[RMDB]
RNA sequence: GGGAACGACUCGAGUAGAGUCGAAAAGAUAUGGAAAUACUGAGCGCGACAUGGUCGGAAACGACCAUGAGAACGAACUACGCUCUGUAUUUCCUAAGUCAAAGCGAAAGGCUUCGGCCUUUCGCAAGUCUAAGGAAAUCUUCGGAUUUCCUUAGACAAAAGAAACAACAACAACAAC
Reactivity to DMS in 0.01 (KOAc 150mM, MgCl2 10mM, bicine 150mM(pH8.5), 24C), signal-to-noise 2, nucleotides 027 to 126: g000a000u000a150u010g000g000a010a010a000u000a000c000u010g010a040g020c040g010c070g010a240c020a000u000g000g000u000c000g020g030a050a030a050c020g000a000c000c000a000u000g000a110g000a070a080c140g020a090a060c100u010a300c020g020c000u010c000u010g000u000a000u000u000u000c000c000u000a000a070g000u020c020a100a120a110g010c000g010a010a000a000g000g010c020u000u030c300g020g020c000c000u000u000u000c000g010c000a020a010
Reactivity to 2A3 in 0.01 (KOAc 150mM, MgCl2 10mM, bicine 150mM(pH8.5), 24C), signal-to-noise 2, nucleotides 027 to 126: g000a000u020a010u080g020g010a000a000a010u010a010c020u050g000a010g050c260g030c000g170a070c010a000u010g050g000u010c000g010g000a010a010a000c000g000a000c000c040a000u000g000a010g000a070a040c040g060a130a100c170u180a050c280g000c000u000c000u010g000u000a000u000u010u000c000c010u000a000a010g010u010c020a070a120a040g000c010g000a000a000a000g020g000c020u100u170c300g180g000c000c000u030u010u010c000g000c000a010a010